The data come from the RNA Mapping Database (RMDB), library RFM100. Chemical mapping of a 177-nucleotide RNA with 2A3. Reactivities are rounded to 0.1 and cut off at 0 and 3.

RNA sequence: GGGAACGACUCGAGUAGAGUCGAAAAUCUGCACCUGGCUGCAGCUCCAGUCUGGUGCUUUUUCCAUCUGCCAAAGAAACAGUCCAGAAUGCUGUGGCUUCCUCUGCCUAUCAGAGGCAGUGCAGCUAACCGCAGGCUAGUUCGCUAGCCUGCGGUUAAAAGAAACAACAACAACAAC
Reactivity to 2A3 in 0.01 (KOAc 150mM, MgCl2 10mM, bicine 150mM(pH8.5), 24C), signal-to-noise 1, nucleotides 027 to 126: u010c020u050g000c000a000c000c000u000g020g000c000u000g010c050a230g030c030u060c000c000a020g050u000c010u060g000g020u010g040c020u000u000u000u000u000c000c000a000u000c030u070g030c000c150a090a110a060g070a070a070a220c020a040g050u050c010c010a030g090a160a050u100g070c010u010g000u050g080g000c000u040u060c000c000u000c000u020g020c040c020u240a180u230c000a000g000a000g000g020c010a010g000u000g000c010a000g000c000u000

Values cover nucleotides 27 to 126. The RNA was probed in 150 mM KOAc, 10 mM MgCl2 and 150 mM bicine (pH 8.5) at 24 C. For 2A3 the reverse transcriptase was SuperScript II with manganese.